Conditions: 150 mM KOAc, 10 mM MgCl2 and 150 mM bicine (pH 8.5), 24 C. Structure probing data (2A3 and DMS) for a 177-nucleotide construct. For DMS the reverse transcriptase was MarathonRT. For 2A3 the reverse transcriptase was SuperScript II with manganese.
RNA sequence: GGGAACGACUCGAGUAGAGUCGAAAAGGCGGAAUCCCGAAAUCCCUCCCAAACGCGCGCAAAUAAAGGGAGGGAGGGAUGAUCCCAAAAGCGCGCGACGGGGUGAAGGCUCAACGGCCGAACGCCAAGUAGGGCCAUAGUUCGCUAUGGCCCUACUAAAAGAAACAACAACAACAAC
Reactivity to 2A3 in 0.01 (KOAc 150mM, MgCl2 10mM, bicine 150mM(pH8.5), 24C), signal-to-noise 2, nucleotides 027 to 126: g060g050c020g000g040a070a080u000c010c000c020g000a030a010a020u010c000c020c000u030c010c020c000a060a170a110c060g010c000g000c000g000c050a110a260a000u300a180a260a080g030g030g020a030g010g000g000a030g020g020g000a030u060g000a080u040c000c000c000a020a170a000a000g020c000g000c000g000c020g020a010c040g020g030g030g030u010g070a080a020g030g010c050u040c090a080a010c040g050g010c020c000g030a030a010c020g000c000c000a000
Reactivity to DMS in 0.01 (KOAc 150mM, MgCl2 10mM, bicine 150mM(pH8.5), 24C), signal-to-noise 1, nucleotides 027 to 126: g000g000c010g000g000a180a070u000c000c010c000g060a070a110a090u000c000c010c000u000c010c000c000a020a220a080c010g030c000g030c000g040c000a090a040a080u030a080a110a100g060g030g000a030g000g000g000a010g100g000g000a090u000g000a110u000c060c000c030a050a090a030a020g000c000g000c000g000c030g050a240c120g000g130g000g000u000g080a160a080g000g080c020u000c070a100a080c150g050g000c000c010g000a020a030c080g020c050c000a060